[RMDB]
RNA sequence: GGGAACGACUCGAGUAGAGUCGAAAAGGGGUCCUUCGCGAUGAGGUGAAGGAAGGCAACAGCCUGUCUGAAGCCUCCACGGACAGGACAUGCCUUCCCUGCACCGAGCGAAGGACGGAGGCACCCAAACGGUAGCAUCGUUCGCGAUGCUACCGAACCACUGCGGAAAGUUCGCUUUCCGCAGUGGAAAAGAAACAACAACAACAAC
Reactivity to 2A3 in 0.01 (KOAc 150mM, MgCl2 10mM, bicine 150mM(pH8.5), 24C), signal-to-noise 2, nucleotides 027 to 156: g040g000g040g070u010c050c000u000u000c000g030c070g130a300u300g120a050g060g000u010g030a020a010g020g040a010a000g030g000c100a300a050c010a280g000c020c000u000g010u030c010u020g050a100a020g000c010c000u010c000c000a020c000g000g010a000c000a000g030g050a020c100a140u300g010c000c000u000u020c000c000c000u020g000c000a000c000c000g000a010g000c000g000a010a000g000g000a000c000g000g000a000g000g020c000a050c000c010c000a040a060a020c020g000g000u000a000g000c000a010u000c000g030u070u080c300g030c020g150a000u000g000c010u000a000c000c000g000a000a010